[RMDB]
RNA sequence: GGGAACGACUCGAGUAGAGUCGAAAAGCAUGCAAGCCAUGGAGAAUCAACCCUUGGCGCUCAUUUUGCUCCAAGAGCAACCCACGCUCUCCUCGCGUUUUGACGAUCUCCUUACUAGCUACAUGACAUAGGCAACGUAGUUCGCUACGUUGCCUAUAAAAGAAACAACAACAACAAC
Reactivity to DMS in 0.01 (KOAc 150mM, MgCl2 10mM, bicine 150mM(pH8.5), 24C), signal-to-noise 2, nucleotides 027 to 126: g050c060a040u000g040c060a050a100g020c040c020a020u000g010g000a060g010a140a130u000c120a110a090c060c030c000u000u000g000g000c040g000c050u010c240a120u010u000u000u000g010c010u010c030c060a040a080g000a020g030c030a080a070c050c020c030a060c160g010c010u000c030u030c030c020u000c100g020c030g010u000u000u000u000g000a150c120g010a070u000c020u000c020c020u000u000a080c090u000a020g000c010u010a060c040a050u010g010a090c230
Reactivity to 2A3 in 0.01 (KOAc 150mM, MgCl2 10mM, bicine 150mM(pH8.5), 24C), signal-to-noise 2, nucleotides 027 to 126: g030c020a020u090g000c060a110a000g010c010c000a060u070g040g020a090g010a120a190u100c020a050a120c020c000c050u020u010g030g050c030g030c020u050c030a230u130u220u120u110g000c000u000c000c040a100a030g040a020g060c060a040a100c040c050c000a000c010g000c000u000c020u040c000c000u040c010g080c030g000u040u030u080u180g050a040c040g000a070u020c010u020c020c010u050u060a130c080u050a020g050c010u050a020c010a060u130g050a050c010